[RMDB]
RNA sequence: GGGAACGACUCGAGUAGAGUCGAAAAGCGGGGCUUGAAACGCGGGUAGCGCGCACGCCCGGCGAAGAAGUUCGCAUACGCGGUGUGCUGGUGCCGAAGUGUCUGCUGCAACGGCACGCACGACACCUAGAACAUACCGUAUUCGUACGGUAUGUAAACACGUAAGUGCUUUCGAGCACUUACGUGUAAAAGAAACAACAACAACAAC
Reactivity to 2A3 in 0.01 (KOAc 150mM, MgCl2 10mM, bicine 150mM(pH8.5), 24C), signal-to-noise 3, nucleotides 027 to 156: g050c040g000g010g000g000c020u060u130g070a100a080a030c030g010c040g010g020g060u180a110g110c030g020c020g010c040a020c030g010c010c000c000g000g010c000g000a050a010g060a060a020g110u030u060c010g000c060a020u080a190c050g010c110g040g000u000g000u020g020c040u050g040g010u030g000c010c020g020a080a050g070u090g010u100c070u160g080c070u110g000c010a040a050c020g030g000c020a030c030g040c000a040c050g080a010c010a020c000c000u030a030g030a110a010c000a000u000a000c000c000g000u010a020u000u070c140g010u040a000c000g000g000u000a010u000g000u020a000a000
Reactivity to DMS in 0.01 (KOAc 150mM, MgCl2 10mM, bicine 150mM(pH8.5), 24C), signal-to-noise 2, nucleotides 027 to 156: g000c020g000g000g010g000c040u010u020g020a120a110a050c000g040c020g030g020g040u020a080g030c030g020c040g070c050a020c130g040c000c000c050g000g000c030g020a020a280g000a140a210g000u000u000c040g010c030a140u010a130c050g010c110g040g000u000g030u000g060c000u000g020g010u000g020c000c020g020a050a210g010u000g040u010c080u000g010c060u000g000c100a130a150c070g000g020c000a030c040g070c010a110c000g010a060c030a000c010c040u000a140g000a130a080c000a000u000a030c010c010g000u000a000u000u000c300g030u000a020c010g010g030u010a000u000g000u000a000a100